[RMDB]
RNA sequence: GGGAACGACUCGAGUAGAGUCGAAAAAUUGUCACGCGUUCGCCUCCGUCGCUCACCACGCGCGCGCGAAACCGUCUUUUGAUCCAAAAGACGUAACCGGGGUUUAGGGGUUGCGCAAACCUGACGAUCUUACCGAUUGAUUCGUCAAUCGGUAAGAAAAAGAAACAACAACAACAAC
Reactivity to DMS in 0.01 (KOAc 150mM, MgCl2 10mM, bicine 150mM(pH8.5), 24C), signal-to-noise 4, nucleotides 027 to 126: a110u000u010g000u000c070a110c060g020c090g020u010u010c060g010c020c020u000c050c080g000u020c070g020c040u010c050a140c070c090a080c180g010c070g020c060g020c060g010c020g020a070a100a120c270c010g010u000c010u000u000u000u000g000a110u010c160c070a040a030a010a030g000a010c000g010u010a040a070c100c030g000g010g010g000u000u010u000a120g010g000g000g010u000u000g000c060g000c060a050a040a090c030c010u000g010a080c080g000a120
Reactivity to 2A3 in 0.01 (KOAc 150mM, MgCl2 10mM, bicine 150mM(pH8.5), 24C), signal-to-noise 3, nucleotides 027 to 126: a000u110u140g080u050c030a020c100g040c010g040u040u090c060g030c000c010u060c030c000g110u090c010g020c010u040c010a090c090c000a040c060g050c000g000c000g010c000g010c010g060a040a010a000c030c020g020u040c010u060u090u050u090g200a300u180c110c040a010a010a020a010g000a000c000g020u030a010a000c010c020g040g020g000g000u010u040u120a070g040g020g020g010u020u060g010c040g000c050a050a080a070c010c020u020g040a030c050g060a060

Structure probing data (DMS and 2A3) for a 177-nucleotide construct. As a SHAPE reagent, 2A3 marks flexible, mostly unpaired nucleotides at the ribose 2'-OH. The reactions ran in a buffer of 150 mM KOAc, 10 mM MgCl2 and 150 mM bicine (pH 8.5), at 24 C. It was measured as part of the RMDB library OK2TST. The DMS profile rests on 4,064 reads. For 2A3 the reverse transcriptase was SuperScript II with manganese.